[RMDB]
RNA sequence: GGGAACGACUCGAGUAGAGUCGAAAAUCUUAAAGAACUGAUGCCAAUAUUCCGGGAGACGGAGUACUAUACGUUGGCCAGUUUAGUUGAACAAUGUGGAGGAGCAAUUGCAAGUUUGGGUGGUGGACGUGAUGAUGACGUUCGCGUCAUCAUCACGAAAAGAAACAACAACAACAAC
Reactivity to DMS in 0.01 (KOAc 150mM, MgCl2 10mM, bicine 150mM(pH8.5), 24C), signal-to-noise 1, nucleotides 027 to 126: u000c060u000u000a000a130a100g010a020a020c000u000g020a140u010g000c010c010a040a050u010a100u000u000c000c030g010g000g020a140g010a220c020g010g000a010g020u010a060c300u020a120u010a080c300g000u000u000g000g000c000c000a000g000u000u010u010a060g010u010u020g000a060a110c130a030a100u000g050u000g000g000a100g000g000a050g020c090a090a060u000u000g030c120a070a060g000u000u010u020g010g010g000u000g020g000u000g010g000a100